[RMDB]
Chemical mapping of a 207-nucleotide RNA with 2A3 and DMS. The 2A3 profile rests on 1,099 reads. Source: RMDB library OK3TST, as collected in RNAgym. For 2A3 the reverse transcriptase was SuperScript II with manganese. The RNA was probed in 150 mM KOAc, 10 mM MgCl2 and 150 mM bicine (pH 8.5) at 24 C.
RNA sequence: GGGAACGACUCGAGUAGAGUCGAAAAAAGUCUCACAUAAUGUAGUUCUUUCUAAAGGGAAAGUUACUGUGUAAAGGGCAUGCUUUAUUUGAACUGCUAUUUAAGAGUAAAUGUGAACCUUUGGGUGACAGUACCUUAGCUAUAAAUACUGCCUCUCUAAUGCCUGUAGAUUCGUCUACAGGCAUUAAAAAGAAACAACAACAACAAC
Reactivity to 2A3 in 0.01 (KOAc 150mM, MgCl2 10mM, bicine 150mM(pH8.5), 24C), signal-to-noise 3, nucleotides 027 to 156: a000a000g100u040c010u070c000a020c010a050u230a150a070u070g020u020a040g010u060u020c040u010u040u020c060u140a160a140a050g140g010g000a010a080a030g040u080u050a050c020u040g030u020g060u120a000a030a110g030g030g000c020a030u090g030c030u050u060u090a060u120u070u050g040a050a000c030u020g010c020u060a050u120u190u110a090a040g070a020g050u080a030a150a220u090g020u020g050a020a040c000c020u070u090u160g120g000g000u020g010a000c010a010g010u020a000c010c000u020u020a000g000c020u040a000u060a170a050a060u050a040c040u000g020c020c030u050c000u030c060
Reactivity to DMS in 0.01 (KOAc 150mM, MgCl2 10mM, bicine 150mM(pH8.5), 24C), signal-to-noise 2, nucleotides 027 to 156: a070a100g020u000c020u000c020a140c080a150u010a130a090u000g020u000a120g010u000u000c030u010u000u000c020u000a060a080a070g060g000g020a090a080a080g010u000u000a000c020u000g010u010g060u000a050a010a050g010g020g010c010a050u010g020c000u000u010u000a100u020u000u000g020a040a070c060u010g020c030u000a080u010u000u000a070a090g010a110g020u000a000a040a050u000g020u000g020a070a150c020c010u000u000u000g000g010g010u010g000a010c020a030g020u000a030c050c080u000u000a140g010c150u010a090u000a060a050a060u000a020c030u010g010c000c000u000c050u000c000